An RNA of 207 nucleotides, treated with 2A3 and read out base by base. The reactions ran in a buffer of 150 mM KOAc, 10 mM MgCl2 and 150 mM bicine (pH 8.5), at 24 C. Reactivities are given for positions 27 through 156.
RNA sequence: GGGAACGACUCGAGUAGAGUCGAAAAGGGGUCAUAAUAUUUACUGCCCUAGCUUUUGACGCUCUGAAGCCUCCACGGAGCGAUAAGCUAGGGAACUACAGUAAAGAUUAUGACGGAGGCACCCAAACCUUGUAAAACGUUCGCGUUUUACAAGGAACCAUCAAAUGGACUUCGGUCCAUUUGAUGGAAAAGAAACAACAACAACAAC
Reactivity to 2A3 in 0.01 (KOAc 150mM, MgCl2 10mM, bicine 150mM(pH8.5), 24C), signal-to-noise 2, nucleotides 027 to 156: g020g010g010g010u000c000a000u000a000a010u020a010u030u010u000a000c010u010g000c000c000c000u000a000g000c010u070u170u200u250g140a080c040g000c000u000c000u000g050a160a010g010c000c010u020c000c000a040c030g000g000a000g000c000g050a090u050a140a020g000c000u000a000g000g000g000a000a010c030u170a050c010a010g000u010a000a000a000g010a010u010u000a000u000g030a010c010g000g020a000g010g000c020a040c010c010c010a060a060a120c000c000u000u000g000u000a000a000a000a040c000g020u040u070c290g040c020g150u010u030u010u000a000c000a000a000g040g010a000a040